[RMDB]
RNA sequence: GGGAACGACUCGAGUAGAGUCGAAAAAUUGCACAAUAUAUUUUUACUGCUUUCUGAAUGUAGACGGAACAGUGUGGAAGCAGAAGGCUUUUUUAACUCAUCCGUUUGCCAAUCAUUGCAAACAACUGAAAUGUGGAUGUGAUUGCCUCAAUAAAGCACGUCCAUACGAUUUCGAUCGUAUGGACGUAAAAGAAACAACAACAACAAC
Reactivity to 2A3 in 0.01 (KOAc 150mM, MgCl2 10mM, bicine 150mM(pH8.5), 24C), signal-to-noise 1, nucleotides 027 to 156: a000u040u070g000c080a050c040a170a030u050a000u020a110u030u010u070u040u020a040c050u040g000c000u040u040u000c020u080g100a110a100u070g000u080a040g070a140c030g010g010a030a000c010a030g030u060g000u040g180g010a000a000g010c000a000g100a100a040g140g000c080u000u040u000u000u060u190a080a020c000u060c010a000u020c000c010g000u000u000u010g020c040c000a030a060u040c000a070u060u210g020c010a020a020a010c000a000a050c100u270g160a070a020a160u070g070u090g060g020a020u000g000u010g030a020u030u090g010c000c010u010c190a000a050u030a060a040a000g020c010
Annotation
Structure probing data (2A3) for a 207-nucleotide construct. The RNA was probed in 150 mM KOAc, 10 mM MgCl2 and 150 mM bicine (pH 8.5) at 24 C. For 2A3 the reverse transcriptase was SuperScript II with manganese.